[RMDB]
RNA sequence: GGGAACGACUCGAGUAGAGUCGAAAAUCCUAAGUCUUCGAGGAUCAACGACGAUCAGCCAUUGUCAGUGUGUUCGGAAACGAACACACUUGGAUUUAUGGCUGGGAGUUGAUCGUAGAAGAUAUGGAAAAGGUCGGAAGGUUCGCCUUCCGACCAAGAUUGUGAUAUACUUCGGUAUAUCACAAUCAAAAGAAACAACAACAACAAC
Reactivity to DMS in 0.01 (KOAc 150mM, MgCl2 10mM, bicine 150mM(pH8.5), 24C), signal-to-noise 2, nucleotides 027 to 156: u000c010c000u000a100a280g000u010c000u020u030c000g000a300g020g010a040u000c010a030a070c000g000a170c110g030a160u010c000a000g000c010c000a010u000u000g020u000c010a060g020u000g030u000g000u000u010c000g020g000a170a140a260c030g020a060a010c000a000c000a000c010u000u000g030g020a030u000u000u000a010u020g010g020c000u020g000g000g000a120g000u000u000g010a020u010c020g000u000a300g000a010a000g020a010u030a150u000g000g000a060a110a100a190g000g030u000c000g020g020a060a020g010g030u000u020c300g030c010c000u000u000c010c000g000a000c010c010a000a050
Reactivity to 2A3 in 0.01 (KOAc 150mM, MgCl2 10mM, bicine 150mM(pH8.5), 24C), signal-to-noise 5, nucleotides 027 to 156: u010c010c000u040a120a050g020u000c000u000u000c010g050a080g120g000a020u000c000a000a010c000g300a050c010g010a040u010c000a000g000c000c000a010u010u010g010u010c000a000g000u000g000u000g000u000u000c010g030g020a090a070a040c020g000a000a000c000a000c000a000c010u010u030g020g000a010u100u230u280a000u000g000g000c000u000g000g000g000a030g000u000u000g000a000u000c000g010u010a000g000a000a000g000a000u000a010u030g000g020a030a060a090a090g000g000u010c010g000g030a010a000g010g020u070u170c180g110c060c000u000u000c000c010g000a000c000c000a000a000